RNA sequence: GGGAACGACUCGAGUAGAGUCGAAAAGGCGACAUUGCCAAAUUGCGGGAAGUCCCUAAAGAUUCAACUACUAAGCAGCUUGUGGAAACACAGUUGUGGCCGAGUUAAUAGCCCUGGGUAUAGUAACAAGAUAGAAACUCUUCGGAGUUUCUAUCUUAAAAGAAACAACAACAACAAC
Reactivity to DMS in 0.01 (KOAc 150mM, MgCl2 10mM, bicine 150mM(pH8.5), 24C), signal-to-noise 3, nucleotides 027 to 126: g000g000c150g010a010c130a120u010u030g030c010c040a050a130a080u030u070g020c130g010g000g020a040a070g000u000c000c000c010u000a050a100a200g010a040u010u020c120a070a050c060u000a090c120u040a200a190g000c020a030g010c020u000u080g030u000g000g000a100a110a230c000a010c030a030g010u020u000g000u000g000g000c240c110g000a010g000u000u010a080a080u010a110g010c010c000c000u000g000g010g010u010a050u000a080g000u000a030a090c170
Reactivity to 2A3 in 0.01 (KOAc 150mM, MgCl2 10mM, bicine 150mM(pH8.5), 24C), signal-to-noise 1, nucleotides 027 to 126: g000g000c070g030a070c090a290u010u100g080c020c010a040a070a040u230u150g030c070g010g010g010a000a030g030u040c020c000c000u070a100a150a070g020a000u000u150c010a060a020c000u160a020c020u020a100a000g000c000a000g020c000u200u300g050u020g020g010a050a100a000c000a020c030a070g000u020u000g010u030g000g000c010c030g010a010g000u030u090a040a030u090a130g060c000c020c030u020g050g040g040u150a170u040a080g150u010a060a090c010
Structure probing data (DMS and 2A3) for a 177-nucleotide construct.
For DMS the reverse transcriptase was MarathonRT.
The 2A3 profile rests on 738 reads.